[RMDB]
RNA sequence: GGGAACGACUCGAGUAGAGUCGAAAAGAACAACAGCAAUCUCACAUAGUGCGUGACUACCCUCAAUACGACAUCCUAUUCACCCAUUCUACGCACUCGGACCACCCGAUGGCUGCUGCUAGCAGACCUGAACCCAUGGGUUCGCCCAUGGGUUCAGAAAAGAAACAACAACAACAAC
Reactivity to DMS in 0.01 (KOAc 150mM, MgCl2 10mM, bicine 150mM(pH8.5), 24C), signal-to-noise 2, nucleotides 027 to 126: g010a150a080c020a030a090c070a050g030c030a090a080u000c040u010c070a050c110a090u020a070g000u020g000c030g000u020g000a090c110u000a110c060c030c040u000c090a050a080u000a100c070g010a030c060a040u000c060c040u010a120u000u000c080a060c020c050c020a060u010u000c040u010a050c100g020c030a070c060u000c050g000g010a030c040c080a080c040c040c010g010a070u000g000g010c030u000g000c020u000g010c160u000a020g010c020a020g020a120c160
Reactivity to 2A3 in 0.01 (KOAc 150mM, MgCl2 10mM, bicine 150mM(pH8.5), 24C), signal-to-noise 1, nucleotides 027 to 126: g020a120a000c030a010a010c000a010g050c050a060a100u010c030u070c010a110c050a150u240a020g100u120g030c020g080u030g040a030c000u100a080c010c000c000u090c000a050a040u130a040c110g020a030c040a040u010c000c050u060a090u070u010c040a100c010c040c000a030u070u110c070u090a040c050g050c000a060c020u000c020g030g070a080c030c060a030c010c030c000g010a020u100g000g000c000u010g010c000u050g060c000u020a030g040c000a000g030a120c000
This 177-nucleotide RNA was probed chemically with DMS and 2A3. The 2A3 profile rests on 751 reads. For DMS, 1,278 sequencing reads were counted. It was measured as part of the RMDB library OK2TST. The reactions ran in a buffer of 150 mM KOAc, 10 mM MgCl2 and 150 mM bicine (pH 8.5), at 24 C.